[RMDB]
RNA sequence: GGGAACGACUCGAGUAGAGUCGAAAAGAGAAGUCUCGACUGAAGCUCUGAGAGAGAUCCUGAGACUUCAGGAGAAGAGUCAGCUUCUCGAGAAGGACUGACUCUAGAGUCCUUCAGCUGAAGAGCUAGCUGAUCAGCUUCCUCUGACUGAUCAGUCUCCUUGUUUCACUUUCGAGUGAAACAAGGAAAAAGAAACAACAACAACAAC
Reactivity to DMS in 0.01 (KOAc 150mM, MgCl2 10mM, bicine 150mM(pH8.5), 24C), signal-to-noise 1, nucleotides 027 to 156: g040a050g000a040a140g020u000c010u020c020g000a170c030u020g020a070a120g000c030u000c000u020g020a150g010a110g040a300g010a190u000c000c070u010g000a040g020a180c090u010u000c000a020g020g000a200g040a110a150g000a140g000u000c050a080g020c010u010u000c010u000c020g000a260g010a060a100g020g000a010c010u000g010a180c080u000c170u000a090g010a050g000u010c020c010u000u000c000a170g020c010u000g000a090a090g000a050g020c060u020a160g000c010u000g000a000u000c050a020g000c030u000u000c080c020u000c050u000g000a030c000u000g010a020u010c000a050g020u000c140
Reactivity to 2A3 in 0.01 (KOAc 150mM, MgCl2 10mM, bicine 150mM(pH8.5), 24C), signal-to-noise 2, nucleotides 027 to 156: g030a000g000a020a020g080u120c010u020c030g050a050c010u010g010a020a010g000c000u000c010u070g250a270g000a020g010a000g010a210u030c010c030u040g030a090g100a290c010u040u010c000a000g050g070a070g040a140a030g000a010g030u050c040a010g020c020u040u020c010u020c020g030a070g000a030a000g000g010a010c010u030g000a040c030u030c070u190a080g030a000g090u000c000c000u000u000c010a030g000c030u070g080a070a040g010a050g130c010u040a000g000c000u000g000a000u000c000a010g030c010u070u050c020c040u080c040u080g120a190c000u010g000a020u010c000a000g050u000c020